[RMDB]
RNA sequence: GGGAACGACUCGAGUAGAGUCGAAAAAUAUCCUCAGUCAUCUGAGCUCACCCCUGCUGUCACAUCUUUUGGAUCCUGUAAUGCAGUUGGUAUUGUCUCUAAAAGAUCCGUUGCAAGCAGCCCAUUUCCGCGCUUCUCAACGGUGAUAUCGCCAGCCACCAUGGGCUAUAUUCGUAUAGCCCAUGGUAAAAGAAACAACAACAACAAC
Reactivity to 2A3 in 0.01 (KOAc 150mM, MgCl2 10mM, bicine 150mM(pH8.5), 24C), signal-to-noise 2, nucleotides 027 to 156: a020u130a050u030c000c020u030c000a000g030u070c000a080u030c090u040g030a020g000c010u030c020a090c020c020c000c000u040g000c010u010g020u060c000a030c000a060u010c040u040u140u090u110g050g040a040u030c000c030u020g050u180a060a060u110g060c030a060g010u090u050g050g020u070a090u110u120g060u010c000u000c030u060a080a080a000a000g010a030u040c020c010g020u010u010g000c060a050a000g000c030a050g020c020c040c000a180u100u090u070c080c050g040c000g000c020u010u040c010u000c060a030a020c000g020g030u030g050a030u050a010u170c030g050c070c010a010g000c000c050
Reactivity to DMS in 0.01 (KOAc 150mM, MgCl2 10mM, bicine 150mM(pH8.5), 24C), signal-to-noise 1, nucleotides 027 to 156: a140u010a100u020c020c010u000c000a110g030u000c080a130u000c020u010g010a120g000c070u000c030a170c000c000c020c000u000g020c030u010g030u010c040a090c040a130u000c070u000u010u000u000g030g010a050u000c040c050u010g000u000a080a220u000g000c080a100g040u000u000g010g000u000a100u000u000g000u000c020u000c070u010a040a090a070a110g010a190u000c000c030g020u020u000g010c300a070a080g020c060a050g000c000c040c040a190u000u010u000c100c030g040c090g000c040u000u000c110u000c040a030a010c000g000g000u020g020a130u010a090u000c030g030c010c030a100g050c090c050
The data come from the RNA Mapping Database (RMDB), library OK3TST. An RNA of 207 nucleotides, treated with 2A3 and DMS and read out base by base.